This 177-nucleotide RNA was probed chemically with 2A3 and DMS. Values cover nucleotides 27 to 126. It was measured as part of the RMDB library OK1LIB. For 2A3, 642 sequencing reads were counted. The DMS profile rests on 949 reads.
RNA sequence: GGGAACGACUCGAGUAGAGUCGAAAAGCAAGCCUGUAAUGAGAGAUGGCGGGACGAAAGAAGGAAAAGACUUUCCUCUACCUACUUUAAAGAUGUUGCCGAGAGACUGCCAACAACCUUCUCAUCAGAAAAACGCGUUUUUCGAAACGCGUUUUUCAAAAGAAACAACAACAACAAC
Reactivity to 2A3 in 0.01 (KOAc 150mM, MgCl2 10mM, bicine 150mM(pH8.5), 24C), signal-to-noise 2, nucleotides 027 to 126: g030c000a020a020g000c010c020u180g040u220a070a200u080g030a060g040a030g000a080u030g020g000c000g060g000g000a010c030g080a110a090a180g040a000a180g060g040a100a030a000a040g110a110c040u050u030u000c000c000u000c000u000a040c000c000u000a040c030u190u170u060a020a030a000g110a060u230g020u250u070g060c010c030g010a000g010a000g010a030c000u050g040c150c000a040a010c000a020a010c070c050u050u050c000u000c000a090u000c070a030
Reactivity to DMS in 0.01 (KOAc 150mM, MgCl2 10mM, bicine 150mM(pH8.5), 24C), signal-to-noise 1, nucleotides 027 to 126: g000c160a000a090g030c090c000u000g010u060a220a100u000g010a030g000a060g000a060u000g000g010c080g010g000g000a080c290g020a000a030a000g060a060a020g000g000a050a020a080a110g000a090c070u000u000u000c020c090u000c030u000a200c110c000u000a080c150u010u040u000a000a100a200g000a080u000g000u000u000g040c110c000g020a000g060a140g000a060c000u030g000c000c000a000a200c110a000a060c170c030u000u000c000u000c000a020u030c210a010